[RMDB]
Conditions: 150 mM KOAc, 10 mM MgCl2 and 150 mM bicine (pH 8.5), 24 C. This 177-nucleotide RNA was probed chemically with DMS. DMS adducts were read by reverse transcription with MarathonRT.
RNA sequence: GGGAACGACUCGAGUAGAGUCGAAAAGCAUGGUACAUAUGAUCGAGGCCUGACGUACUAUCGUACAGUCUGCGCUCGUACUGCGCCGGAUCGAUCAGCGCUCGUACGCGCGCUCAUGCGUACUCGACAAUUGCGGACUGUUCGCAGUCCGCAAUUGAAAAGAAACAACAACAACAAC
Reactivity to DMS in 0.01 (KOAc 150mM, MgCl2 10mM, bicine 150mM(pH8.5), 24C), signal-to-noise 3, nucleotides 027 to 126: g010c040a070u000g000g000u000a040c090a100u010a080u010g010a080u010c060g040a060g010g010c100c020u010g010a030c040g000u010a030c030u000a080u000c220g010u000a000c010a120g000u000c030u000g000c060g010c000u000c040g000u000a000c000u010g000c040g010c010c030g010g000a090u000c150g000a070u010c020a080g000c000g000c020u020c220g000u000a000c010g010c080g010c000g020c010u000c100a020u000g030c020g000u000a060c020u000c110g010a140